[RMDB]
RNA sequence: GGGAACGACUCGAGUAGAGUCGAAAACGACUGAUCAUGAUUGGGCAGAGUCAGUCUUCAAUCCAAAAGAGGAGUACCCGAUCCUGGAGACCGCUCGGGAUACUAAGAAUGUUCAAUCAAAUAUUACCAGUAAGCCUCCGUUCGCGGAGGCUUACUGAAAAGAAACAACAACAACAAC
Reactivity to 2A3 in 0.01 (KOAc 150mM, MgCl2 10mM, bicine 150mM(pH8.5), 24C), signal-to-noise 1, nucleotides 027 to 126: c060g000a000c050u070g120a020u080c170a090u160g020a000u020u020g000g060g000c010a020g000a000g130u040c000a000g030u050c000u140u060c060a070a200u140c010c010a000a090a000a130g160a010g040g000a000g000u020a020c000c000c000g000a060u090c000c000u100g090g000a110g170a150c000c260g020c110u000c000g000g000g000a040u040a210c000u000a000a060g130a150a000u110g000u000u050c020a000a000u000c000a000a060a000u230a080u010u220a120c120